[RMDB]
RNA sequence: GGGAACGACUCGAGUAGAGUCGAAAAGCAGUCCCGUAGGGGUCACUGCGAACACUUGACUACCGGACGGGCCAGUCUUGUGGAUUGGACGGACUACUACGGGUCGCGCCAGUAGGACGUCCGAAAAGGCAUGGAGCAGCUUCGGCUGUUCCAUGCCAAAAGAAACAACAACAACAAC
Reactivity to 2A3 in 0.01 (KOAc 150mM, MgCl2 10mM, bicine 150mM(pH8.5), 24C), signal-to-noise 4, nucleotides 027 to 126: g000c010a000g020u120c040c020c010g050u260a160g000g050g000g000u040c090a010c030u000g000c010g000a060a020c010a000c000u020u010g010a010c000u070a080c050c050g120g140a120c130g080g010g010c090c060a010g000u000c000u000u050g020u020g050g080a140u090u230g000g000a000c020g020g000a000c000u000a000c000u040a090c110g030g000g030u180c040g000c020g050c020c020a010g000u000a010g000g010a010c010g000u000c000c010g000a020a010a040a040
Reactivity to DMS in 0.01 (KOAc 150mM, MgCl2 10mM, bicine 150mM(pH8.5), 24C), signal-to-noise 2, nucleotides 027 to 126: g000c020a010g010u010c000c000c000g000u110a090g000g000g000g000u010c240a020c020u010g000c010g060a230a040c030a040c030u000u010g000a010c000u000a120c040c010g000g020a060c150g000g000g040c040c110a040g000u010c000u000u030g040u000g000g000a160u000u000g000g010a070c000g000g010a060c000u000a010c000u030a140c110g050g000g000u010c230g000c300g010c040c010a090g000u010a000g000g010a010c030g010u000c000c000g060a020a020a160a130